[RMDB]
RNA sequence: GGGAACGACUCGAGUAGAGUCGAAAAGAAAGAAAGAAAGAAAGGUAUGAAGUCCUAUUCACUCGGGAUAGGAUAAACUUCAUAUUGAUCGUGUAUGUGCUAACGCACAUACACGAAUGCGCAUGCAGAACUGCAUGCAUGAACAUAUUGGGUGCAACCAGUAAUUACGUUUCGACGUAAUUACUGGAAAAGAAACAACAACAACAAC
Reactivity to DMS in 0.01 (KOAc 150mM, MgCl2 10mM, bicine 150mM(pH8.5), 24C), signal-to-noise 2, nucleotides 027 to 156: g020a200a080a070g000a140a130a090g000a110a060a120g010a140a090a250g010g010u010a030u020g000a050a040g030u000c010c000u000a000u010u000c020a270c190u000c190g050g030g000a030u000a020g020g000a120u000a040a100a090c030u000u000c000a040u000a030u000u000g010a100u000c010g000u030g000u000a000u000g040u000g000c000u000a120a170c300g010c000a020c000a010u020a000c010a020c000g010a010a000u010g030c060g000c030a030u010g010c000a050g000a040a120c080u000g010c030a080u000g000c020a010u000g000a020a050c070a060u000a080u000u000g000g000g010u000g010c030a120a220
Reactivity to 2A3 in 0.01 (KOAc 150mM, MgCl2 10mM, bicine 150mM(pH8.5), 24C), signal-to-noise 7, nucleotides 027 to 156: g030a000a070a010g080a030a040a000g070a050a110a000g080a090a080a020g030g000u000a010u010g000a000a010g020u020c000c000u000a000u000u030c070a080c210u140c160g120g010g000a010u000a010g020g010a030u110a070a070a010c000u000u000c000a000u010a020u030u070g020a060u020c000g000u020g000u000a000u010g010u000g010c070u140a130a030c150g000c000a000c000a000u000a000c000a000c000g000a010a000u030g010c030g000c010a000u000g000c010a010g050a290a090c200u040g000c000a010u000g010c010a010u090g030a050a020c070a030u100a080u110u150g070g020g000u070g020c020a050a050